[RMDB]
An RNA of 207 nucleotides, treated with 2A3 and read out base by base. Values cover nucleotides 27 to 156. Conditions: 150 mM KOAc, 10 mM MgCl2 and 150 mM bicine (pH 8.5), 24 C.
RNA sequence: GGGAACGACUCGAGUAGAGUCGAAAAAUUCUUUAUCUGUGGAAAUCGACAUCAGUUACCUUAGUGUCCAUUGUAUGGAAAAAAUUAUGAAAAUUGAUUGCAUUAGAAUUUUUAGCCAUCUAAAGCAUUUCUAAUUUUACUUAAAAUGCAUCGCUGGCCUUCACGUAUGUUUCGACAUACGUGAAGGAAAAGAAACAACAACAACAAC
Reactivity to 2A3 in 0.01 (KOAc 150mM, MgCl2 10mM, bicine 150mM(pH8.5), 24C), signal-to-noise 1, nucleotides 027 to 156: a000u080u070c050u070u110u060a220u150c010u050g050u040g090g040a070a110a070u130c030g070a000c000a020u050c000a090g000u110u070a050c010c000u030u050a090g020u010g040u050c020c040a020u050u050g030u110a100u180g010g000a200a000a000a030a030a030u120u090a070u180g050a030a090a070a130u020u070g000a000u000u090g010c000a030u020u150a030g070a190a110u200u220u030u000u090a130g050c000c000a010u030c050u090a090a070a000g010c000a000u000u050u000c030u020a000a070u050u020u020u050a050c010u000u070a050a150a000a000u030g060c030a010u100c110g030c110u050g060g000